[RMDB]
RNA sequence: GGGAACGACUCGAGUAGAGUCGAAAAUCUAAAACCUCUGACCAUUCACUACCACUAUCCAUUUCCAUAGAUAGUAGGUGUGUAACAGUUUGAUUAAAGUAGUGUCAGGCCGGGCCCGUAAUGUCAGGCCCACACCUGUAAUCCCAGCACUUUGGGACGGAUAAUUAGCUUUCGAGCUAAUUAUCCGAAAAGAAACAACAACAACAAC
Reactivity to 2A3 in 0.01 (KOAc 150mM, MgCl2 10mM, bicine 150mM(pH8.5), 24C), signal-to-noise 2, nucleotides 027 to 156: u030c060u070a050a010a130a270c060c000u070c050u070g190a210c030c000a130u090u060c000a010c040u250a100c010c000a010c000u000a020u000c050c070a170u160u230u170c030c030a030u090a090g030a030u000a000g070u040a180g030g000u000g000u000g000u000a050a030c000a000g030u030u100u070g210a170u150u160a140a200a050g030u040a020g040u120g060u080c020a000g000g000c020c040g010g000g010c010c010c010g010u030a000a190u110g110u140c060a030g030g000c000c000c000a000c000a000c000c010u050g060u090a010a050u070c020c000c040a030g030c190a100c080u180u230u100g010g050g050a020
Structure probing data (2A3) for a 207-nucleotide construct. Reactivities are rounded to 0.1 and cut off at 0 and 3. The data come from the RNA Mapping Database (RMDB), library OK3TST.